Conditions: 150 mM KOAc, 10 mM MgCl2 and 150 mM bicine (pH 8.5), 24 C. This 207-nucleotide RNA was probed chemically with 2A3.

RNA sequence: GGGAACGACUCGAGUAGAGUCGAAAAUAAUCAAUCCUUUCGCGAAAAACCGCGGGUGGAUCCGGUACGUACCGGUGAUUACGGACCAUACAAGGGACCGAGAGCGCGCUGAGUUGGGGUCGUAUCUCUACGACCUCUUCUCGCGUUGUCUCUCGGACUCUCAUUUGGGGUUCGCCCCAAAUGAGAGAAAAGAAACAACAACAACAAC
Reactivity to 2A3 in 0.01 (KOAc 150mM, MgCl2 10mM, bicine 150mM(pH8.5), 24C), signal-to-noise 2, nucleotides 027 to 156: u200a010a100u070c100a000a060u000c000c000u050u080u020c010g000c010g090a180a090a100a120a070c100c000g000c000g020g030g010u050g010g000a000u020c000c000g020g000u100a040c040g010u020a010c000c030g010g090u140g020a000u080u000a010c010g030g010a040c000c000a040u100a260c090a120a140g090g010g040a010c000c000g000a010g000a000g000c000g010c010g010c130u300g010a000g030u020u010g010g000g000g000u000c000g010u030a050u140c140u040c150u120a000c000g000a000c000c000u000c000u000u000c000u010c000g000c010g000u000u170g020u000c000u000c000u000c000g000g000a010

For 2A3 the reverse transcriptase was SuperScript II with manganese.